[RMDB]
RNA sequence: GGGAACGACUCGAGUAGAGUCGAAAACCGGUGGCCAACAUCCAUGUCGGCUCCACGAUCCUGAAGGAUUGCAUCAACCGCCGUGGGUCGUUCAAUGGCGGCCUGGCCUGCUAUGUGGGGGCCACCAUCACUCCGCUACGUUCGCGUAGCGGAGUGAAAAAGAAACAACAACAACAAC
Reactivity to DMS in 0.01 (KOAc 150mM, MgCl2 10mM, bicine 150mM(pH8.5), 24C), signal-to-noise 1, nucleotides 027 to 126: c000c030g000g010u020g000g020c000c030a080a070c060a000u000c070c050a000u000g000u000c040g000g040c000u000c290c140a090c050g000a040u010c000c010u000g040a190a260g010g010a060u000u000g000c210a210u040c200a090a080c020c010g000c090c010g040u000g000g000g000u000c100g000u000u000c150a140a040u000g010g080c000g000g000c020c130u000g010g000c070c000u010g030c030u010a070u000g020u000g000g010g020g000g000c040c000a000c050c010a080
Reactivity to 2A3 in 0.01 (KOAc 150mM, MgCl2 10mM, bicine 150mM(pH8.5), 24C), signal-to-noise 1, nucleotides 027 to 126: c000c010g050g000u020g010g000c020c020a000a010c010a080u050c030c010a020u020g020u030c010g020g030c010u000c000c010a030c020g010a050u000c000c020u160g300a280a170g040g000a060u090u020g000c060a060u000c040a110a000c050c020g010c000c020g000u060g000g000g070u030c070g000u030u120c050a120a120u070g030g010c000g000g020c020c060u010g030g060c050c000u050g000c030u050a010u150g050u070g060g020g060g000g000c000c000a010c020c000a000